[RMDB]
RNA sequence: GGGAACGACUCGAGUAGAGUCGAAAACGGGGUCGGUGAAAGUCCGAACCGUCGGUUACAGUCCGCGACCCGGUCGCCUCCAGCGACCGGUUGACCAGGUGAAAUUCCUGGACCGACGGUUAAAGUCAAAAUCAUCCAACGUUCGCGUUGGAUGAAACAAUAUUAUGACCUUCGGGUCAUAAUAUUGAAAAGAAACAACAACAACAAC
Reactivity to 2A3 in 0.01 (KOAc 150mM, MgCl2 10mM, bicine 150mM(pH8.5), 24C), signal-to-noise 1, nucleotides 027 to 156: c020g010g020g010g040u030c000g020g000u000g010a070a000a010g040u010c010c010g000a000a010c000c000g010u000c000g000g000u050u120a100c070a050g080u050c040c060g020c030g100a050c020c000c050g010g000u000c010g000c020c070u300c150c070a020g000c050g000a000c020c000g000g000u010u040g000a000c010c000a010g000g010u010g030a010a040a010u060u040c010c010u000g000g000a000c000c000g000a000c000g000g000u030u080a070a040a000g050u070c050a020a000a010a180u030c010a000u010c010c000a000a000c000g020u030u060c200g010c010g130u010u000g000g000a010u010g000a000a000a000
Reactivity to DMS in 0.01 (KOAc 150mM, MgCl2 10mM, bicine 150mM(pH8.5), 24C), signal-to-noise 2, nucleotides 027 to 156: c030g010g040g060g050u000c030g050g050u050g020a080a140a300g000u000c010c000g020a070a090c010c000g010u000c000g010g010u000u000a080c070a080g030u030c070c040g010c100g010a120c280c000c000g030g000u000c010g050c010c020u000c210c150a150g040c040g000a030c010c000g000g020u000u000g010a130c040c000a010g000g010u000g000a040a300a300u000u000c010c000u010g000g020a080c000c000g010a100c030g000g020u010u000a020a060a100g000u030c070a020a050a080a130u010c010a030u000c000c000a020a010c000g030u000u000c300g020c040g020u000u000g000g000a000u000g000a000a030a100
Structure probing data (2A3 and DMS) for a 207-nucleotide construct. For DMS, 3,529 sequencing reads were counted. The RNA was probed in 150 mM KOAc, 10 mM MgCl2 and 150 mM bicine (pH 8.5) at 24 C. Reactivities are given for positions 27 through 156. For 2A3 the reverse transcriptase was SuperScript II with manganese.